[RMDB]
RNA sequence: GGGAACGACUCGAGUAGAGUCGAAAACGCAUAUAUCGCCGCAUACGCGCGUAUGCGCGCCGCGCGAUACGCAUAAUAGCGCGCCGCUAUAUAGCGAUAGCGUAUAUAAUACGCAUAUAUAUACGCCUGAUCCGGUGUAGUUCGCUACACCGGAUCAAAAAGAAACAACAACAACAAC
Reactivity to 2A3 in 0.01 (KOAc 150mM, MgCl2 10mM, bicine 150mM(pH8.5), 24C), signal-to-noise 1, nucleotides 027 to 126: c010g040c060a010u160a030u030a050u200c000g010c050c010g060c040a040u080a150c070g030c030g000c060g040u080a060u220g010c000g000c010g080c070c040g010c000g020c020g060a030u080a140c060g000c050a020u080a240a030u040a120g000c020g000c000g060c020c000g000c000u050a050u050a010u110a170g030c010g020a040u070a000g030c010g070u020a010u030a000u030a020a180u210a020c100g050c140a000u020a000u000a000u000a000u000a050c010g030c000c050
Reactivity to DMS in 0.01 (KOAc 150mM, MgCl2 10mM, bicine 150mM(pH8.5), 24C), signal-to-noise 1, nucleotides 027 to 126: c040g030c070a070u000a080u000a010u000c010g000c060c090g000c060a130u000a170c030g030c070g040c020g050u000a010u000g000c010g020c000g020c170c110g010c030g010c030g020a060u000a040c080g050c040a040u000a030a070u010a030g000c040g030c120g030c060c060g010c020u000a030u000a050u000a060g000c040g030a140u020a070g000c000g000u000a020u000a100u000a080a080u000a110c190g030c130a090u000a030u000a030u000a000u010a020c020g010c000c170